[RMDB]
RNA sequence: GGGAACGACUCGAGUAGAGUCGAAAAUGUUUGCCACUUUAUGGCGAUCUAUUUGUAUGUCUGAUUAGGAGGCCGGAUAACCGGCCUCAGCGUGUAUUACUUAUCUUCGGCCAAUGAAUAGGGCAGCUCAAUGGCACACUUUCGAGUGUGCCAUUGAAAAAGAAACAACAACAACAAC
Reactivity to DMS in 0.01 (KOAc 150mM, MgCl2 10mM, bicine 150mM(pH8.5), 24C), signal-to-noise 1, nucleotides 027 to 126: u000g000u000u000u000g010c010c000a080c160u010u000u000a120u000g010g030c000g000a010u000c050u000a060u000u000u000g020u000a040u000g000u000c010u020g010a080u010u010a150g010g000a020g000g030c000c000g000g020a300u040a180a160c020c000g010g000c000c000u000c000a020g020c110g000u000g050u000a050u000u010a050c020u000u000a050u000c140u000u000c020g020g020c090c000a020a050u010g000a040a050u020a110g000g010g000c010a020g000c160